Record summary:
Conditions: 150 mM KOAc, 10 mM MgCl2 and 150 mM bicine (pH 8.5), 24 C. Chemical mapping of a 207-nucleotide RNA with 2A3 and DMS. For DMS the reverse transcriptase was MarathonRT.

RNA sequence: GGGAACGACUCGAGUAGAGUCGAAAAUUGAUAAUUUGUUGUGUAACUUCAUUUAAAUGAAUUGAAACAAAUAUAAUACAAGUGGAUGUAGGAUAACCGUCCGUCCUUUACAUUGGUAUAAAAGUGAACGACACAGACCUCUUCGGAGGUCUGUGAACCAAUGUUAACAGUUCGCUGUUAACAUUGGAAAAGAAACAACAACAACAAC
Reactivity to 2A3 in 0.01 (KOAc 150mM, MgCl2 10mM, bicine 150mM(pH8.5), 24C), signal-to-noise 3, nucleotides 027 to 156: u070u060g030a020u090a230a120u050u010u090g000u010u010g040u010g030u030a060a100c010u040u010c020a080u110u120u260a150a280a080u080g020a030a070u070u050g030a070a020a050c010a000a040a000u160a040u110a070a200u090a070c010a010a070g060u070g100g000a050u080g050u100a060g010g050a040u070a090a140c020c000g040u000c000c000g020u040c000c000u040u050u030a050c040a100u030u060g070g000u130a050u030a110a070a040a010g060u040g070a060a020c030g070a020c010a000c000a000g000a000c000c000u000c040u030u060c100g090g000a000g010g000u010c000u000g000u000g000a000a000
Reactivity to DMS in 0.01 (KOAc 150mM, MgCl2 10mM, bicine 150mM(pH8.5), 24C), signal-to-noise 2, nucleotides 027 to 156: u000u010g020a160u000a080a100u000u000u000g040u000u000g000u000g020u000a150a100c090u000u000c020a050u010u010u010a030a090a100u010g010a060a100u010u000g010a200a080a130c020a020a020a090u000a090u000a080a110u000a110c000a080a090g050u010g000g020a070u010g000u060a030g000g000a060u020a060a190c080c160g000u000c040c010g010u000c010c000u000u000u000a040c010a080u000u010g030g020u010a070u000a040a060a080a090g000u000g000a030a040c030g020a260c000a000c000a030g000a040c000c000u000c000u000u010c300g050g000a010g000g010u000c000u000g010u000g010a010a090